[RMDB]
RNA sequence: GGGAACGACUCGAGUAGAGUCGAAAACAGCGCGCUUAGGCAGUUAGUUCAAGCAAGUUCAUUAGAGGCUUAGAGCAAGGCAGAGCACAGCAGCAGCUUCACAGCUUGCCAAGCAAGCAAGUUUUGCAGCACACAGCGCCAAGUUGCCAAGGCUUCAGUAACGUUUUCAAUUCGUUGAAAACGUUACAAAAGAAACAACAACAACAAC
Reactivity to 2A3 in 0.01 (KOAc 150mM, MgCl2 10mM, bicine 150mM(pH8.5), 24C), signal-to-noise 4, nucleotides 027 to 156: c020a010g050c040g000c010g000c110u070u130a080g050g010c050a040g060u100u120a010g010u040u080c030a030a010g010c010a040a050g040u060u100c080a100u200u250a080g050a050g080g000c010u030u050a010g020a010g040c020a040a040g050g000c030a020g030a030g080c020a040c020a080g000c010a020g020c020a010g000c010u040u040c030a030c010a050g010c000u010u010g010c040c000a130a050g100c060a040a010g000c000a010a000g030u000u010u040u050g020c020a010g000c000a000c010a010c010a070g020c010g000c040c020a040a020g040u030u020g030c010c020a060a080g050g000c000u060u070c030a010
Reactivity to DMS in 0.01 (KOAc 150mM, MgCl2 10mM, bicine 150mM(pH8.5), 24C), signal-to-noise 2, nucleotides 027 to 156: c060a110g010c040g020c010g030c010u000u000a080g040g010c050a070g010u000u000a090g020u000u010c030a080a110g020c040a040a110g010u000u020c070a130u000u000a100g010a150g030g000c030u000u000a090g010a050g020c030a090a140g020g000c000a100g000a100g070c020a100c040a100g000c060a110g010c030a110g020c010u000u010c050a060c130a080g000c020u000u000g000c000c000a010a180g000c090a080a070g000c020a040a040g020u000u000u000u000g010c050a060g010c030a090c100a090c070a070g020c020g000c030c010a020a300g000u000u000g000c000c030a130a190g020g000c020u000u000c040a290